[RMDB]
RNA sequence: GGGAACGACUCGAGUAGAGUCGAAAAUAUCCCGGGAGGUCACUCUCCCCGGGCUCUGUCCUAGUGGCGAACGGGAGCUUAGGGCAUUGCCCGGUGAUGUACAGUCCCUUUCCACAACGUUGGAGAUUAAUGAAAUAGGCUUCGGCCUAUUUCAUUAAAAAGAAACAACAACAACAAC
Reactivity to 2A3 in 0.01 (KOAc 150mM, MgCl2 10mM, bicine 150mM(pH8.5), 24C), signal-to-noise 3, nucleotides 027 to 126: u150a030u010c000c000c000g000g010g010a040g020g020u100c020a000c030u110c020u010c010c030c000c000g000g000g000c020u000c020u010g000u010c010c000u050a060g090u180g230g020c030g060a200a110c120g120g040g090a090g010c020u050u050a000g010g000g020c000a010u010u010g000c010c010c000g000g010u020g010a010u070g030u040a070c040a050g070u010c000c020c020u000u050u050c020c010a120c050a230a090c110g040u080u010g040g000a080g010a060u010
Reactivity to DMS in 0.01 (KOAc 150mM, MgCl2 10mM, bicine 150mM(pH8.5), 24C), signal-to-noise 2, nucleotides 027 to 126: u040a120u000c000c020c010g010g000g000a020g010g000u000c140a070c100u020c030u000c040c030c010c020g000g000g000c000u000c020u000g000u000c010c010u000a030g000u020g000g010c050g020a240a110c120g020g030g010a300g010c050u000u000a010g000g000g000c010a010u000u010g010c010c000c000g000g010u010g020a050u020g020u020a040c120a130g000u000c040c000c010u000u010u000c020c000a030c090a150a120c160g020u000u000g000g000a060g000a170u020

Conditions: 150 mM KOAc, 10 mM MgCl2 and 150 mM bicine (pH 8.5), 24 C.
An RNA of 177 nucleotides, treated with 2A3 and DMS and read out base by base.
In probing experiments dimethyl sulfate is read out at A N1 and C N3, which are open when not base-paired.
DMS adducts were read by reverse transcription with MarathonRT.
2A3 adducts were read by reverse transcription with SuperScript II with manganese.
2A3 is a SHAPE reagent: it acylates the 2'-hydroxyl of flexible nucleotides of all four kinds.